[RMDB]
RNA sequence: GGGAACGACUCGAGUAGAGUCGAAAAUCUGCUUUGUUCGCAAAGCAGAAAAAAAGAUAUGGACCUAGGUGGGAGAAAUGUAUUUCGGAAACGAAAUACCGCUUUCAUCGAUCACCGGGUCCUAAGUCAAAAAGGUGACUCGUUCGCGAGUCACCAAGUAGUCCUUUAAGUUCGCUUAAAGGACUACAAAAGAAACAACAACAACAAC
Reactivity to DMS in 0.01 (KOAc 150mM, MgCl2 10mM, bicine 150mM(pH8.5), 24C), signal-to-noise 1, nucleotides 027 to 156: u010c000u010g000c000u020u000u000g070u010u000c300g080c010a000a010a000g030c000a070g000a030a000a060a190a050a140a220g000a010u000a130u000g020g020a020c020c000u020a090g120g030u020g020g000g000a070g010a030a040a080u020g000u000a020u000u000u000c020g050g000a030a060a100c000g000a020a000a020u000a000c020c260g030c300u010u000u010c000a300u000c140g000a050u020c020a000c000c000g000g040g020u000c010c030u020a000a050g010u000c000a070a080a080a160a130g000g060u000g020a010c000u000c020g020u000u010c300g020c010g030a020g000u000c000a010c000c000a020a040
Reactivity to 2A3 in 0.01 (KOAc 150mM, MgCl2 10mM, bicine 150mM(pH8.5), 24C), signal-to-noise 3, nucleotides 027 to 156: u000c000u010g000c000u020u000u000g030u070u120c180g020c120a000a000a010g020c020a010g040a050a010a000a020a000a000a000g020a010u020a030u050g000g010a000c020c030u050a300g020g000u010g010g030g010a040g010a000a040a070u190g000u000a010u000u000u000c000g020g010a030a020a040c000g000a000a000a000u000a000c010c000g030c050u060u030u010c100a230u300c060g030a030u030c000a000c000c010g000g010g000u000c000c000u000a010a000g000u000c010a000a020a010a080a050g000g000u010g000a000c010u000c000g040u080u070c190g020c000g150a000g000u000c000a000c000c010a000a010
Source: RMDB library RNAMAK, as collected in RNAgym. Structure probing data (DMS and 2A3) for a 207-nucleotide construct. Values are in units of 0.01, from 0 to 300, in steps of 10. The RNA was probed in 150 mM KOAc, 10 mM MgCl2 and 150 mM bicine (pH 8.5) at 24 C. The DMS profile rests on 1,927 reads.